[RMDB]
RNA sequence: GGGAACGACUCGAGUAGAGUCGAAAAGAGUGAGGCUUAUCCCGGGGAACUCGGCGAAUCGUCCCCACAUAGCAGGACCCGGGGCCCCCUUCCGAAGUGACCGAAGGGGGGUGCUAGGACCGUGGGGCUCAUAUUUACACUUCGGUGUAAAUAUGAGAAAAGAAACAACAACAACAAC
Reactivity to DMS in 0.01 (KOAc 150mM, MgCl2 10mM, bicine 150mM(pH8.5), 24C), signal-to-noise 3, nucleotides 027 to 126: g000a090g010u010g000a120g000g010c030u000u010a120u010c010c020c010g010g000g020g000a100a070c040u000c040g010g020c100g000a070a100u010c080g000u010c000c000c010c010a040c040a080u000a110g020c090a100g010g000a180c020c010c000g020g010g010g010c010c000c000c000c000u000u000c010c040g020a090a180g020u010g000a110c190c090g010a020a000g000g000g000g010g000g020u000g010c010u000a140g010g010a090c160c090g010u000g000g020g000g010
Overview: This 177-nucleotide RNA was probed chemically with DMS. Reactivities are rounded to 0.1 and cut off at 0 and 3. It was measured as part of the RMDB library VIROID. Conditions: 150 mM KOAc, 10 mM MgCl2 and 150 mM bicine (pH 8.5), 24 C.